[RMDB]
RNA sequence: GGGAACGACUCGAGUAGAGUCGAAAAGGACGAGAUGAGGAACGAUCUCUAUGAUAUGGAGGUGGAUGUACAACGCUCCAGUGGUUCUUUUCUCCAUUGGCAAAUGAUUAACAUGUACCAGGGCAUAGUACUAAUCCUCGUUCGCGAGGAUUAGUACAAAAGAAACAACAACAACAAC
Reactivity to 2A3 in 0.01 (KOAc 150mM, MgCl2 10mM, bicine 150mM(pH8.5), 24C), signal-to-noise 3, nucleotides 027 to 126: g060g000a030c050g000a010g030a110u060g020a090g100g030a070a020c040g040a060u000c010u000c010u060a130u160g180a110u060a070u150g020g010a050g110g100u080g020g000a080u110g030u100a050c060a080a010c120g000c060u010c000c000a010g000u020g060g000u020u120c000u070u110u120u020c040u000c010c020a030u000u060g010g010c010a070a040a120u090g020a070u140u150a080a080c010a090u070g040u120a050c010c020a040g030g000g000c030a030u040a080
Reactivity to DMS in 0.01 (KOAc 150mM, MgCl2 10mM, bicine 150mM(pH8.5), 24C), signal-to-noise 3, nucleotides 027 to 126: g000g000a030c100g010a090g010a060u000g010a120g030g010a060a120c120g010a030u000c020u000c040u000a070u010g000a130u010a180u000g000g000a020g010g020u000g000g020a060u010g030u000a100c120a040a160c040g000c070u000c000c000a050g000u000g010g010u010u010c070u000u000u000u000c060u000c000c020a080u000u000g000g030c130a050a090a050u000g010a130u000u010a100a110c120a030u000g010u010a100c010c020a080g010g000g010c170a050u000a090